[RMDB]
RNA sequence: GGGAACGACUCGAGUAGAGUCGAAAACAUGUGUACUUCGGUACACAUGAAAUGACCGCCAUUAUAGGCUAAGGCUACACGGACGGCCGGGUCAAAUGCCGAAAAUCGUUGCGUUCGCGCAACGAAAGUAAGAGUGCAUGUUCGCAUGCACUCUUACAAAAGAAACAACAACAACAAC
Reactivity to 2A3 in 0.01 (KOAc 150mM, MgCl2 10mM, bicine 150mM(pH8.5), 24C), signal-to-noise 1, nucleotides 027 to 126: c000a000u000g000u000g000u000a000c010u040u030c200g100g000u010a000c000a000c000a000u000g020a010a010a000u110g000a000c010c010g090c000c020a110u240u160a140u260a210g010g000c080u140a170a090g000g000c000u010a030c110a020c090g060g000a010c010g010g000c020c020g000g000g000u000c010a030a000a000u060g020c020c000g000a080a000a000a010u040c000g000u000u000g010c010g020u030u030c250g000c000g000c060a000a010c000g010a000a000a000
Reactivity to DMS in 0.01 (KOAc 150mM, MgCl2 10mM, bicine 150mM(pH8.5), 24C), signal-to-noise 2, nucleotides 027 to 126: c010a000u000g000u000g000u000a000c000u000u010c170g000g000u000a000c000a000c000a010u000g000a020a090a110u010g000a020c000c020g030c010c000a140u000u010a130u010a160g000g020c000u020a040a040g010g010c010u000a060c130a080c030g000g000a020c020g000g020c000c000g000g010g000u000c000a050a070a040u000g000c000c010g000a230a090a120a090u000c000g000u000u000g000c000g000u000u010c190g010c010g020c000a000a000c000g000a000a020a070